[RMDB]
RNA sequence: GGGAACGACUCGAGUAGAGUCGAAAACGGACAUGUACAUCUGCAGGAUGGUGGCCAUACACGUGUCCGCCAGGCGCCGCAUCUUGUCCUGAUGGGCCGCCACGGCCCCGUCGAUCGUGGGGGCCUCCAUGCGGAAAUUAUUCGUAAUUUCCGCAUGAAAAGAAACAACAACAACAAC
Reactivity to 2A3 in 0.01 (KOAc 150mM, MgCl2 10mM, bicine 150mM(pH8.5), 24C), signal-to-noise 9, nucleotides 027 to 126: c030g000g010a010c020a020u070g060u160a040c030a120u070c070u110g080c050a090g040g100a070u050g010g050u010g040g000c040c020a040u120a130c130a020c120g040u030g000u020c000c000g000c010c010a050g050g020c070g040c040c010g060c020a030u030c020u040u080g040u050c010c020u040g030a090u130g010g010g000c060c040g090c040c020a010c020g020g010c010c010c010c010g210u210c060g050a250u050c020g020u060g010g010g000g000g000c000c000u010c020
Reactivity to DMS in 0.01 (KOAc 150mM, MgCl2 10mM, bicine 150mM(pH8.5), 24C), signal-to-noise 7, nucleotides 027 to 126: c100g010g000a020c010a020u000g000u040a100c090a130u010c100u000g010c080a090g010g010a090u010g010g000u010g010g000c040c050a060u000a110c230a080c160g010u000g000u000c000c000g000c030c030a060g000g010c080g000c060c020g000c050a050u010c020u000u010g010u010c030c030u000g010a080u020g010g000g010c060c010g010c010c020a030c060g010g000c030c020c060c080g020u030c100g000a100u020c060g010u010g010g000g000g000g010c010c000u010c130